[RMDB]
RNA sequence: GGGAACGACUCGAGUAGAGUCGAAAAGUGGGAAAGAUGAAGAAUGUAGCGCGAAGAAGCCUCAGGUGGCGGAUCCGGGUGAGAACGUGGCACCUUUUUUUUCGGUGGGCAAUCAUCCCUCAGACGGUCGUAAAAUUAGUUUCGACUAAUUUUACGAAAAAGAAACAACAACAACAAC
Reactivity to 2A3 in 0.01 (KOAc 150mM, MgCl2 10mM, bicine 150mM(pH8.5), 24C), signal-to-noise 4, nucleotides 027 to 126: g050u050g020g030g030a070a150a090g080a090u110g040a040a070g030a080a010u100g010u120a020g040c020g000c020g060a080a080g050a060a020g060c010c010u030c050a050g050g030u030g030g030c030g010g010a020u030c030c030g010g030g050u060g040a070g010a060a010c040g030u030g060g000c010a020c000c030u070u070u010u020u010u000u030u100c030g010g020u040g000g020g010c010a000a020u040c010a030u010c020c020c000u060c020a070g030a130c060g040g060
Reactivity to DMS in 0.01 (KOAc 150mM, MgCl2 10mM, bicine 150mM(pH8.5), 24C), signal-to-noise 8, nucleotides 027 to 126: g020u000g010g010g010a080a070a080g010a080u000g010a090a060g010a100a070u010g010u000a080g020c070g010c060g020a100a120g010a160a160g010c070c030u010c110a070g010g020u000g010g020c070g010g000a080u010c070c080g010g010g010u000g000a080g000a060a080c120g010u000g010g020c050a040c020c010u000u000u000u000u000u000u000u000c080g010g010u000g000g000g010c070a040a060u000c070a080u010c020c020c020u000c090a090g000a080c210g000g000
Chemical mapping of a 177-nucleotide RNA with 2A3 and DMS. The RNA was probed in 150 mM KOAc, 10 mM MgCl2 and 150 mM bicine (pH 8.5) at 24 C. High DMS reactivity at an A or C suggests that its Watson-Crick edge is free. 2A3 adducts were read by reverse transcription with SuperScript II with manganese.